RNA sequence: GGGAACGACUCGAGUAGAGUCGAAAAUGGAGUGCAAUGGUGUGAUCUCAGCUCACUGCAACCUCAGCCUCCCGGGUUCAAGUGAUUCUCCUGCCUCAGCUUCCCAAGUAGCUGGGAUUACAGGCACAAAUCCGCAAAAUUUCGAUUUUGCGGAUUUAAAAGAAACAACAACAACAAC
Reactivity to 2A3 in 0.01 (KOAc 150mM, MgCl2 10mM, bicine 150mM(pH8.5), 24C), signal-to-noise 3, nucleotides 027 to 126: u180g080g000a090g020u020g010c020a040a150u190g150g040u070g140u020g040a010u020c010u010c010a000g010c000u020c050a020c010u050g040c060a050a060c000c020u090c020a040g020c000c010u000c010c010c000g010g030g000u100u060c100a110a050g030u040g110a060u140u010c040u020c000c020u040g050c010c000u020c010a020g020c030u030u010c000c000c000a040a000g010u030a000g010c000u000g000g000g000a000u010u020a000c000a000g040g000c020a020c010
Reactivity to DMS in 0.01 (KOAc 150mM, MgCl2 10mM, bicine 150mM(pH8.5), 24C), signal-to-noise 3, nucleotides 027 to 126: u030g000g010a160g010u010g000c010a160a060u030g000g010u000g020u000g000a030u000c000u000c000a020g020c010u000c110a060c040u000g000c130a070a060c070c040u020c070a100g010c090c020u010c010c010c030g000g000g020u000u010c100a040a080g020u000g000a100u030u020c040u000c000c020u010g000c020c030u000c040a040g000c090u000u010c020c000c020a060a090g010u010a030g010c000u010g000g020g000a010u000u000a000c010a070g000g000c030a010c060
The record gives the reactivity of an RNA of 177 nucleotides to 2A3 and DMS.
The DMS profile rests on 8,277 reads.
Conditions: 150 mM KOAc, 10 mM MgCl2 and 150 mM bicine (pH 8.5), 24 C.